Chemical mapping of a 177-nucleotide RNA with DMS and 2A3. As a SHAPE reagent, 2A3 marks flexible, mostly unpaired nucleotides at the ribose 2'-OH. The 2A3 profile rests on 19,750 reads. Reactivities are rounded to 0.1 and cut off at 0 and 3. DMS adducts were read by reverse transcription with MarathonRT.

RNA sequence: GGGAACGACUCGAGUAGAGUCGAAAAGAUAUGGAGACGGCAAGACAUGAGCGAUUGGGUCGGAAACGACCUAGAGCUCAACAGCUUGGCCGUCUCCUAAGUCAAAGCCGGAAGUUCGCUUCCGGCAGAACAUUUACUUGUUCGCAAGUAAAUGUUCAAAAGAAACAACAACAACAAC
Reactivity to DMS in 0.01 (KOAc 150mM, MgCl2 10mM, bicine 150mM(pH8.5), 24C), signal-to-noise 9, nucleotides 027 to 126: g000a050u010a300u010g000g000a010g010a020c000g000g010c000a030a010g000a060c100a270u010g000a010g020c000g000a250u020u010g020g000g010u000c000g010g000a100a080a220c000g010a010c000c000u000a010g000a300g010c000u000c010a030a070c300a160g000c010u000u000g010g010c000c000g010u000c010u000c000c000u000a000a040g010u000c030a120a120a150g010c000c000g000g010a020a010g020u010u020c290g000c000u000u000c000c000g000g010c010a010
Reactivity to 2A3 in 0.01 (KOAc 150mM, MgCl2 10mM, bicine 150mM(pH8.5), 24C), signal-to-noise 4, nucleotides 027 to 126: g000a000u060a010u150g000g010a000g000a000c010g010g030c000a000a000g020a120c080a220u240g010a000g010c010g120a120u120u280g030g020g000u010c020g020g010a070a050a030c000g000a000c010c010u050a010g010a020g020c000u000c010a000a010c040a030g050c010u010u050g070g010c000c000g010u000c000u000c000c000u000a000a000g000u010c010a020a010a040g000c000c010g000g010a010a020g010u090u230c260g080c190u010u000c000c000g000g000c000a000